[RMDB]
Source information: This 207-nucleotide RNA was probed chemically with DMS and 2A3. Source: RMDB library M2RFPK, as collected in RNAgym. The 2A3 profile rests on 2,035 reads.
RNA sequence: GGGAACGACUCGAGUAGAGUCGAAAACGCACUCGCAGCUUAAUAACCUGCGCUGAGCCCUUCUCCCCCAGCUUGCCUGUGUCCUAGGGAAUUGGAAGGUCAUCCUUCACAGGAACGUGUGGAAGUCAUUACUCGUGAGUGUUCGCACUCACGAGAACUCGAUGAAUAUCUUCGGAUAUUCAUCGAGAAAAGAAACAACAACAACAAC
Reactivity to DMS in 0.01 (KOAc 150mM, MgCl2 10mM, bicine 150mM(pH8.5), 24C), signal-to-noise 2, nucleotides 027 to 156: c060g040c020a080c050u000c060g070c030a050g080c030u000u000a180a100u020a210a110c210c000u000g000c000g030c090u000g010a110g010c000c010c060u000u000c060u000c010c000c000c010c020a060g020c030u000u010g040c030c020u010g020u000g010u000c090c020u000a080g000g010g030a100a100u010u020g010g000a060a030g020g010u000c100a150u000c000c020u020u000c020a130c060a050g010g000a040a070c070g000u000g050u000g030g000a070a280g000u000c030a120u000u000a150c020u000c020g000u000g000a030g020u000g020u000u000c300g010c010a020c000u000c000a020c040g000a010g020a010a060
Reactivity to 2A3 in 0.01 (KOAc 150mM, MgCl2 10mM, bicine 150mM(pH8.5), 24C), signal-to-noise 3, nucleotides 027 to 156: c020g000c010a090c010u020c010g000c010a000g000c030u080u030a030a000u050a090a080c010c010u020g060c000g010c120u070g020a050g020c030c000c000u150u060c120u030c010c010c000c010c000a000g020c020u040u120g060c010c010u020g000u010g020u100c030c040u030a040g010g000g060a100a090u070u090g030g030a060a020g060g030u110c030a090u080c020c000u070u090c020a010c000a010g020g030a050a010c050g060u080g030u060g080g000a060a020g050u050c040a120u020u200a070c010u020c010g000u000g000a000g000u000g000u010u050c040g030c040a000c000u000c000a010c000g000a000g000a000a000